[RMDB]
An RNA of 207 nucleotides, treated with 2A3 and read out base by base. The reactions ran in a buffer of 150 mM KOAc, 10 mM MgCl2 and 150 mM bicine (pH 8.5), at 24 C. The 2A3 profile rests on 601 reads. 2A3 is a SHAPE reagent: it acylates the 2'-hydroxyl of flexible nucleotides of all four kinds.

RNA sequence: GGGAACGACUCGAGUAGAGUCGAAAACAGAGCUGAUGGGCCAUGUACCUAUCCAAAAUGAGAUCCCAUCUUGCACACUGUGCUAAUUUGAGAUUCUCAUGUCUCCUACUUGGAGAGAUCUGGACUACUAACUGUAUGACGUUCGCGUCAUACAGAAGGCCGACAUACAGUUCGCUGUAUGUCGGCCAAAAGAAACAACAACAACAAC
Reactivity to 2A3 in 0.01 (KOAc 150mM, MgCl2 10mM, bicine 150mM(pH8.5), 24C), signal-to-noise 1, nucleotides 027 to 156: c000a030g020a020g040c100u060g080a000u030g020g000g060c060c140a200u240g060u080a090c040c030u030a010u070c030c050a010a030a000a090u050g000a000g000a040u000c020c000c010a000u000c030u010u010g000c000a020c010a090c170u230g000u020g000c060u140a090a040u040u020u030g010a020g000a030u280u020c000u000c000a010u000g080u000c020u000c030c000u120a300c100u140u300g000g000a050g000a000g000a030u010c000u010g010g010a040c040u000a050c070u030a300a000c000u000g020u000a000u000g000a000c000g010u000u060c210g000c000g030u010c000a000u000a000c000a010g000a010a030